[RMDB]
RNA sequence: GGGAACGACUCGAGUAGAGUCGAAAAUGUUGAUAAGUCAGUGGAUGAUUGCAGGAUAUUCCAUCAGUUAUCAGCAGUUGUACCACUGAUUUGUUAAUGAAAUCACUUUUGGCUUCGGCCAAAAGUGCUUAAUACGUCCCUUCGGGGACGUAUUAAGAAAAGAAACAACAACAACAAC
Reactivity to 2A3 in 0.01 (KOAc 150mM, MgCl2 10mM, bicine 150mM(pH8.5), 24C), signal-to-noise 3, nucleotides 027 to 126: u140g000u000u010g000a000u000a020a000g010u000c000a000g000u020g000g010a010u020g010a010u020u030g010c040a070g120g100a000u030a040u140u110c120c050a180u160c050a130g080u040u040a000u020c020a020g010c000a000g010u020u010g090u110a300c010c000a020c000u000g010a000u000u010u010g000u000u000a000a000u040g090a010a050a040u110c000a000c010u010u010u010u000g000g010c000u030u000c190g110g000c000c000a000a000a000a000g000u000g000
Reactivity to DMS in 0.01 (KOAc 150mM, MgCl2 10mM, bicine 150mM(pH8.5), 24C), signal-to-noise 4, nucleotides 027 to 126: u010g010u000u000g000a010u000a010a010g010u010c010a040g010u000g000g010a120u000g000a020u000u000g010c020a150g010g010a010u000a010u010u010c100c140a130u010c270a130g010u000u000a010u000c010a100g000c000a010g010u000u000g000u000a150c000c000a020c030u000g000a010u000u000u000g000u000u000a010a010u000g000a060a090a110u010c000a000c000u000u010u000u000g000g010c000u000u020c230g010g010c000c000a000a000a000a010g010u000g000